[RMDB]
RNA sequence: GGGAACGACUCGAGUAGAGUCGAAAAGGCCUUUCGAGGCCCCACGCCCGUAGGUUUCGAAGAACUACACGUAAAAUAUACUCCCCACCUUCGAAAGAGGAGGUAUAUGAUGAAGUGUAGGGAGAAACCUAAACGGUCCUUGCUCAUUCGUGAGCAAAUACUAGCUAGUGUUCGCACUAGCUAGUAUAAAAGAAACAACAACAACAAC
Reactivity to 2A3 in 0.01 (KOAc 150mM, MgCl2 10mM, bicine 150mM(pH8.5), 24C), signal-to-noise 3, nucleotides 027 to 156: g010g000c010c000u070u100u160c270g100a020g000g020c000c000c000c030a110c080g040c040c000c010g010u010a000g040g030u000u020u050c120g130a300a000g020a070a010c000u000a000c000a000c020g060u080a010a000a070a000u030a000u020a020c030u110c040c040c000c030a260c060c070u180u260c110g070a140a100a030g050a040g020g020a030g000g090u000a010u000a010u000g100a060u300g000a040a000g000u000g000u000a000g000g010g000a050g000a000a000a000c000c000u010a030a080a000c030g030g030u070c030c030u040u040g000c000u000c000a040u120u080c140g110u080g030a000g000c000a000a030
Reactivity to DMS in 0.01 (KOAc 150mM, MgCl2 10mM, bicine 150mM(pH8.5), 24C), signal-to-noise 3, nucleotides 027 to 156: g010g020c000c000u000u000u010c130g050a050g040g000c000c040c070c070a110c050g010c070c000c030g030u000a010g030g010u000u000u000c010g010a200a220g020a140a290c000u000a030c020a000c030g000u010a100a230a300a030u010a020u000a020c010u000c000c000c000c010a190c080c040u000u000c100g010a150a180a220g020a070g010g010a090g000g010u000a010u000a000u000g000a100u010g060a190a210g020u000g000u000a000g000g010g010a190g000a020a040a010c010c020u000a010a020a030c040g010g000u010c040c030u000u000g020c010u000c000a070u000u000c170g000u000g010a010g040c000a020a070

An RNA of 207 nucleotides, treated with 2A3 and DMS and read out base by base.
Values cover nucleotides 27 to 156.
For DMS the reverse transcriptase was MarathonRT.
The RNA was probed in 150 mM KOAc, 10 mM MgCl2 and 150 mM bicine (pH 8.5) at 24 C.
For DMS, 5,524 sequencing reads were counted.